[RMDB]
RNA sequence: GGGAACGACUCGAGUAGAGUCGAAAACUCUUAUCGAGAGCGGCAGAGGGACUGGCCCGAUGAAGCCCGGCAACCUAACUUUAUUUAAGCGUAAAGUGAAGGUGCUACUUCCAGCAAAAUGGUGUAUAAACGACCGUUAACUUCGGUUAACGGUCAAUCUGUCUUAAGUCUUCGGACUUAAGACAGAAAAAGAAACAACAACAACAAC
Reactivity to DMS in 0.01 (KOAc 150mM, MgCl2 10mM, bicine 150mM(pH8.5), 24C), signal-to-noise 1, nucleotides 027 to 156: c010u010c010u020u000a260u010c050g050a060g000a080g000c010g020g060c000a080g000a130g010g030g050a130c020u010g010g020c010c000c060g040a140u000g010a050a110g000c030c020c110g010g010c020a020a020c000c000u010a160a020c000u000u000u000a000u000u000u000a190a220g000c300g000u000a020a000a020g020u000g000a140a050g010g020u010g000c000u000a030c010u000u010c010c050a080g020c130a080a020a040a120u000g000g000u010g000u010a050u000a050a170a150c100g060a010c000c020g020u000u000a000a000c000u010u010c300g050g000u000u000a000a010c020g020g000u000c020a010a020
Reactivity to 2A3 in 0.01 (KOAc 150mM, MgCl2 10mM, bicine 150mM(pH8.5), 24C), signal-to-noise 2, nucleotides 027 to 156: c000u040c000u010u100a160u130c070g010a020g010a050g090c200g010g010c000a000g000a020g050g000g020a010c020u030g010g030c000c040c000g070a140u000g020a010a010g010c000c000c000g000g000c030a100a120c010c000u040a040a010c030u040u060u060a100u060u090u180a270a080g160c040g030u010a030a000a000g000u010g070a080a040g000g000u000g040c000u020a050c040u080u070c000c000a020g120c210a020a020a020a190u140g040g020u100g020u130a130u130a260a240a010c150g000a000c000c000g000u000u000a000a000c000u050u050c160g020g010u020u000a020a000c010g000g000u000c000a000a000